RNA sequence: GGGAACGACUCGAGUAGAGUCGAAAAGCCUGUGGGUUCGCCCACAGGCAAAGAAAGCUGACACGCCCAGCACGCAAUGAAGCGAAAAGCGUGAAAAGAAAAAAAGCGGUUACUUCGGUAACCGCAACAUCUAUUGAAGGUUCGCCUUCAAUAGAUGAAAAGAAACAACAACAACAAC
Reactivity to 2A3 in 0.01 (KOAc 150mM, MgCl2 10mM, bicine 150mM(pH8.5), 24C), signal-to-noise 3, nucleotides 027 to 126: g010c000c000u010g010u020g010g040g000u060u150c220g070c040c010c000a010c000a000g000g010c000a000a000a010g010a010a050a010g010c020u020g030a020c010a000c050g000c000c160c010a010g020c030a020c030g000c000a070a300u300g080a300a050g020c010g010a020a040a030a020g000c040g010u020g000a070a050a030a050g080a030a130a030a010a000a010a020g000c000g000g010u000u000a000c000u020u050c180g040g000u000a000a000c000c000g000c000a010a000
Reactivity to DMS in 0.01 (KOAc 150mM, MgCl2 10mM, bicine 150mM(pH8.5), 24C), signal-to-noise 2, nucleotides 027 to 126: g000c000c000u000g040u000g000g000g010u000u020c210g030c000c000c000a010c000a000g000g000c010a010a010a110g010a150a130a150g020c000u020g000a180c020a040c020g010c030c070c030a050g020c050a070c060g030c000a080a100u010g010a140a150g000c050g010a080a000a050a200g010c030g010u000g010a160a080a100a100g040a010a020a040a160a090a130a100g000c000g000g000u000u000a030c010u000u010c120g010g020u000a000a000c000c000g000c000a020a040
An RNA of 177 nucleotides, treated with 2A3 and DMS and read out base by base.
For DMS the reverse transcriptase was MarathonRT.
For 2A3, 4,049 sequencing reads were counted.
Values cover nucleotides 27 to 126.